[RMDB]
RNA sequence: GGGAACGACUCGAGUAGAGUCGAAAAGAUAUGGACAGUGGCCACUUUUGACGGCUAUCAUUCGGAAACGAAUGAUUAGCCGAUAAGUGGCACUGUCCUAAGUCAAAGUUUCCGCUUCGGCGGAAACGGACAGUUUUAUGUUCGCAUAAAACUGUCCAAAAGAAACAACAACAACAAC
Reactivity to DMS in 0.01 (KOAc 150mM, MgCl2 10mM, bicine 150mM(pH8.5), 24C), signal-to-noise 6, nucleotides 027 to 126: g000a040u000a300u010g010g000a020c000a010g010u000g020g010c000c000a010c000u000u000u010u000g020a220c170g010g010c000u000a030u000c000a010u000u000c000g010g000a110a080a170c000g010a020a000u000g000a020u010u010a010g010c000c000g010a030u010a000a010g020u000g000g000c000a010c000u000g000u000c000c000u000a000a060g010u000c030a140a120a210g000u000u000u000c000c000g010c000u000u010c210g020g000c010g010g000a000a000a000c010
Reactivity to 2A3 in 0.01 (KOAc 150mM, MgCl2 10mM, bicine 150mM(pH8.5), 24C), signal-to-noise 6, nucleotides 027 to 126: g020a010u060a030u110g010g010a000c010a000g020u100g300g300c010c010a040c030u130u130u170u290g300a230c100g000g000c000u000a010u000c010a000u000u000c010g030g000a050a060a060c010g000a010a000u020g000a020u070u060a000g000c000c000g030a030u050a050a000g000u000g000g000c000a000c000u000g000u000c000c000u000a010a000g000u000c020a050a080a080g000u000u010u000c000c000g000c020u060u080c250g200g000c000g000g100a000a000a000c010